[RMDB]
RNA sequence: GGGAACGACUCGAGUAGAGUCGAAAAAUGGUUGGGCAUUAGCGCACGUGACCACACACUAGCUGUCGCAUUCAUGUCUGUGGGGGGCAUUCUGCUCUAUCUGUCUACCUUGUCGGCAGCAGCAUCAUACUGACGACGUGUUCGCACGUCGUCAGUAAAAAGAAACAACAACAACAAC
Reactivity to DMS in 0.01 (KOAc 150mM, MgCl2 10mM, bicine 150mM(pH8.5), 24C), signal-to-noise 1, nucleotides 027 to 126: a080u010g000g020u010u030g020g000g030c060a070u000u000a030g020c100g010c030a090c200g000u000g000a070c020c010a070c090a060c120a080c090u000a040g030c070u020g000u000c040g000c070a050u000u010c080a110u010g030u000c050u000g030u010g020g000g000g010g000g000c110a070u010u000c090u010g030c000u010c020u000a040u020c080u000g020u000c060u000a090c100c030u000u000g010u000c030g050g000c020a030g000c130a050g080c220a120u030c150a070
Chemical mapping of a 177-nucleotide RNA with DMS. Reactivities are rounded to 0.1 and cut off at 0 and 3. The RNA was probed in 150 mM KOAc, 10 mM MgCl2 and 150 mM bicine (pH 8.5) at 24 C. For DMS the reverse transcriptase was MarathonRT.